This 177-nucleotide RNA was probed chemically with DMS. For DMS the reverse transcriptase was MarathonRT. Conditions: 150 mM KOAc, 10 mM MgCl2 and 150 mM bicine (pH 8.5), 24 C. The DMS profile rests on 2,952 reads.
RNA sequence: GGGAACGACUCGAGUAGAGUCGAAAAAAAGAUAUGGAGGUACGAGCUCGAGGAUCUGUGGCGUGAGUAUAUCGGAAACGAUAUACAAGACCAGCCACAGGGAGAGCGAGUACCUCCUAAGUCAAAACAUCAGUAAAUCCUUCGGGAUUUACUGAUGAAAAGAAACAACAACAACAAC
Reactivity to DMS in 0.01 (KOAc 150mM, MgCl2 10mM, bicine 150mM(pH8.5), 24C), signal-to-noise 3, nucleotides 027 to 126: a060a110a130g000a020u010a010u010g000g000a010g040g010u000a010c010g000a300g000c000u000c010g010a070g030g000a020u010c010u000g040u000g010g010c010g030u010g010a270g010u000a000u000a000u000c000g030g000a020a000a010c000g020a010u000a010u000a000c020a020a120g010a300c190c000a140g040c000c000a000c010a000g000g000g000a000g000a010g010c010g000a300g000u000a000c000c000u000c000c000u000a000a040g000u000c000a040a080a140a210